[RMDB]
RNA sequence: GGGAACGACUCGAGUAGAGUCGAAAAGAUAUGGAGUUAUACUUCGAUAAGCGUGUGUCGGAAACGACAUAACGCUUUUGACGAAGAUAACUCCUAAGUCAAACCUGGCGCGUUCGCGCGCCAGGAACAAUACUGGACCGUUCGCGGUCCAGUAUUGAAAAGAAACAACAACAACAAC
Reactivity to DMS in 0.01 (KOAc 150mM, MgCl2 10mM, bicine 150mM(pH8.5), 24C), signal-to-noise 2, nucleotides 027 to 126: g000a010u000a180u020g000g000a010g020u010u000a020u010a190c010u000u020c010g010a140u010a030a030g020c010g030u000g020u000g000u000c000g020g020a040a010a060c000g010a000c000a000u010a050a030c000g020c000u010u000u000u000g010a230c100g000a010a020g000a020u000a000a000c000u000c000c000u000a000a050g000u000c010a110a150a260c040c000u000g000g010c000g030c000g020u010u020c300g010c020g010c020g000c000c000a010g010g020a030a050
Reactivity to 2A3 in 0.01 (KOAc 150mM, MgCl2 10mM, bicine 150mM(pH8.5), 24C), signal-to-noise 1, nucleotides 027 to 126: g040a010u020a040u100g000g000a000g010u030u000a010u100a300c020u000u000c010g170a270u120a300a000g010c010g000u030g000u010g010u050c050g000g050a020a010a040c030g010a000c010a000u040a170a080c000g030c000u000u010u010u100g140a040c020g010a000a000g010a010u000a010a000c010u000c000c000u000a010a000g030u030c000a080a080a100c010c000u000g000g050c020g000c010g040u100u050c300g020c000g050c000g000c140c010a000g020g000a000a010

Chemical mapping of a 177-nucleotide RNA with DMS and 2A3. DMS adducts were read by reverse transcription with MarathonRT. For 2A3, 1,990 sequencing reads were counted. The DMS profile rests on 1,959 reads.